[RMDB]
RNA sequence: GGGAACGACUCGAGUAGAGUCGAAAACAGCCGUCCGUAGGCUGACCGGAUGGCGUACGACCCUGUACGCGACGCUGCAGCUCAACGCGUCGAUUAUUGCGUCCGAUAUCCAUUCAGAUCUCCACACUGCAUGGUUGAUGUUCGCAUCAACCAUGCAAAAAGAAACAACAACAACAAC
Reactivity to DMS in 0.01 (KOAc 150mM, MgCl2 10mM, bicine 150mM(pH8.5), 24C), signal-to-noise 1, nucleotides 027 to 126: c090a110g010c000c010g030u000c050c030g010u040a190g010g020c060u000g000a100c150c000g000g000a050u000g000g010c020g040u000a060c100g020a100c100c000c030u000g010u000a030c200g000c010g020a030c050g000c000u000g010c040a090g030c130u010c140a090a080c080g000c000g000u000c000g010a090u020u000a000u000u010g000c090g000u000c040c000g000a090u000a090u000c050c000a100u000u000c080a070g010a080u000c040u000c040c030a050c160a040c130
Reactivity to 2A3 in 0.01 (KOAc 150mM, MgCl2 10mM, bicine 150mM(pH8.5), 24C), signal-to-noise 1, nucleotides 027 to 126: c040a030g000c010c010g050u130c040c000g040u110a060g070g070c040u000g010a000c040c000g020g000a030u030g030g010c020g000u090a010c040g090a110c050c010c010u000g020u020a030c040g070c000g010a000c000g000c000u000g000c010a040g000c040u030c140a140a030c000g010c020g020u000c010g020a060u090u140a110u130u270g020c040g010u000c000c030g030a020u040a040u100c040c020a000u010u050c010a010g060a170u000c050u040c040c030a050c030a050c100